[RMDB]
The data come from the RNA Mapping Database (RMDB), library RNAMAK.
Structure probing data (DMS and 2A3) for a 207-nucleotide construct.
Values cover nucleotides 27 to 156.
For DMS the reverse transcriptase was MarathonRT.
The reactions ran in a buffer of 150 mM KOAc, 10 mM MgCl2 and 150 mM bicine (pH 8.5), at 24 C.

RNA sequence: GGGAACGACUCGAGUAGAGUCGAAAAGAACUGUUCGCAGUUCAAUCGUCCUAAGUCCAAAUAACCGGUCCUGUGAAGCAGAGUAAUCGGAAACGAUUACGACGAAGUGGAGGACCGAUGAAAUUUGGAUAUGGAGUAGCUCUGACUUCGGUCAGAAGUAGGAGUAGAAAUUCGUUUCUACUCCUACAAAAGAAACAACAACAACAAC
Reactivity to DMS in 0.01 (KOAc 150mM, MgCl2 10mM, bicine 150mM(pH8.5), 24C), signal-to-noise 2, nucleotides 027 to 156: g000a040a030c010u000g000u000u010c250g050c020a040g020u000u000c000a040a110u000c100g000u000c030c010u000a080a210g030u000c000c010a030a050a050u000a130a040c010c010g020g030u000c000c000u010g020u030g040a230a260g000c010a080g010a300g000u000a010a010u000c000g040g000a130a090a180c010g000a030u000u000a010c000g010a250c130g030a070a140g010u000g020g010a070g020g020a020c010c010g040a010u020g000a120a250a140u000u000u000g000g030a040u000a140u010g000g030a110g010u010a090g000c060u000c000u000g000a030c020u000u000c260g100g010u000c000a030g000a020a070
Reactivity to 2A3 in 0.01 (KOAc 150mM, MgCl2 10mM, bicine 150mM(pH8.5), 24C), signal-to-noise 2, nucleotides 027 to 156: g000a000a000c010u010g000u130u160c230g000c080a000g010u020u020c000a040a110u130c100g130u020c010c010u030a100a040g040u000c010c000a010a000a010u050a130a110c040c000g020g000u000c000c010u270g050u040g300a020a000g000c010a020g010a000g050u000a000a000u000c010g080g000a060a070a050c000g000a000u010u010a000c000g070a090c030g040a120a020g020u030g020g050a010g000g000a000c000c010g000a000u030g010a050a250a030u000u000u000g000g000a000u000a050u070g020g020a050g040u150a040g030c060u010c000u040g000a000c010u030u070c260g080g000u000c000a000g010a070a000